[RMDB]
RNA sequence: GGGAACGACUCGAGUAGAGUCGAAAACAAGUUGGCUUCGGCCAACUUGAAAAGAAUGGUAGACUGAGACCGCUAAACUCAGAUAACCAAAAAUAGCGGAAUAAAGAUCAGUGUUCGCACUGAUCAACACUAACGAGAUCUUCGGAUCUCGUUAGUGAAAAGAAACAACAACAACAAC
Reactivity to DMS in 0.01 (KOAc 150mM, MgCl2 10mM, bicine 150mM(pH8.5), 24C), signal-to-noise 2, nucleotides 027 to 126: c010a010a020g000u000u000g010g010c000u000u000c270g020g000c010c000a000a000c000u020u000g000a060a040a080a150g000a110a040u010g020g000u010a120g030a160c010u000g000a000g010a160c020c040g000c010u000a050a080a090c000u000c010a020g000a080u000a090a270c050c020a010a010a020a040a130u000a040g000c000g010g010a300a070u010a030a040a160g000a000u000c000a000g010u000g010u010u010c190g020c010a000c000u000g000a000u000c000a060a090
Reactivity to 2A3 in 0.01 (KOAc 150mM, MgCl2 10mM, bicine 150mM(pH8.5), 24C), signal-to-noise 3, nucleotides 027 to 126: c010a000a000g000u000u000g000g040c020u040u120c300g060g010c000c000a000a000c000u000u000g000a000a000a000a020g150a070a090u160g120g050u150a050g030a170c000u000g020a010g010a050c020c000g000c030u050a150a100a050c010u010c000a000g010a080u100a050a080c050c000a010a020a000a000a080u050a020g020c000g030g120a020a050u140a030a160a020g000a010u000c010a000g000u000g040u050u090c210g020c060a000c000u000g010a000u000c000a010a000